[RMDB]
This 207-nucleotide RNA was probed chemically with 2A3. Conditions: 150 mM KOAc, 10 mM MgCl2 and 150 mM bicine (pH 8.5), 24 C.
RNA sequence: GGGAACGACUCGAGUAGAGUCGAAAAGCAGCUUCGGCUGCGCAAUGGGGGUCAGCGGAGCGAGGGUUAGACAUGAGCUGAAGCCUCCACGGCUCAACAGCUAACCUACCCACCGCUCUGGCUGACGGAGGCACCCUUAAUCGCCCUUCGGGGCGAACCCCAAACAAGGUUUCGACCUUGUUUGGGGAAAAGAAACAACAACAACAAC
Reactivity to 2A3 in 0.01 (KOAc 150mM, MgCl2 10mM, bicine 150mM(pH8.5), 24C), signal-to-noise 1, nucleotides 027 to 156: g000c000a020g000c010u050u090c270g140g000c020u030g020c000g000c010a030a220u080g080g060g000g000g000u000c010a010g010c000g010g010a000g000c000g030a070g000g000g070u030u010a000g020a100c210a300u190g050a020g000c000u020g110a090a030g000c000c000u010c010c040a020c000g030g000c000u020c050a190a170c090a160g130c010u010a020a020c040c000u090a140c130c060c050a050c000c090g000c030u000c000u040g300g000c010u000g000a000c030g000g000a000g020g000c030a030c000c030c010u110u180a200a120u080c030g010c000c000c020u000u090c090g030g000g000g030c010g020a050a060